[RMDB]
RNA sequence: GGGAACGACUCGAGUAGAGUCGAAAAUUUAAGAGCGUAGAUGUCUCUGUCACGAUACGAGUAAGUGACUCUCGUGUACUACUGACGAAUGAGACAGAGACAUUUAUGCUCUGUGUCAGUCAAGGAACUAAAACAUAUAAUUCGUUAUAUGUUUUAGAAAAGAAACAACAACAACAAC
Reactivity to 2A3 in 0.01 (KOAc 150mM, MgCl2 10mM, bicine 150mM(pH8.5), 24C), signal-to-noise 8, nucleotides 027 to 126: u110u120u080a070a010g000a000g010c000g000u000a000g000a020u000g000u010c000u000c000u000g010u000c010a010c080g060a020u050a070c020g000a010g010u050a200a100g030u090g230a060c010u020c010u020c080g110u110g020u070a050c020u010a010c020u060g150a090c030g060a110a080u150g010a050g000a070c000a000g000a000g000a000c000a000u000u000u000a000u000g000c000u000c000u000g000u000g010u010c020a020g020u040c040a060a070g110g020a070a060
Reactivity to DMS in 0.01 (KOAc 150mM, MgCl2 10mM, bicine 150mM(pH8.5), 24C), signal-to-noise 9, nucleotides 027 to 126: u010u010u010a110a020g000a010g010c000g030u000a010g010a010u000g010u000c000u000c000u000g010u000c000a090c090g010a100u000a080c020g000a090g000u000a040a080g020u000g010a070c070u010c180u010c180g010u010g010u000a040c040u000a060c040u000g010a120c060g000a120a060u000g000a090g010a010c000a000g000a010g000a010c000a010u000u000u000a000u000g000c000u000c000u000g000u010g010u000c080a080g010u000c100a080a100g000g010a090a180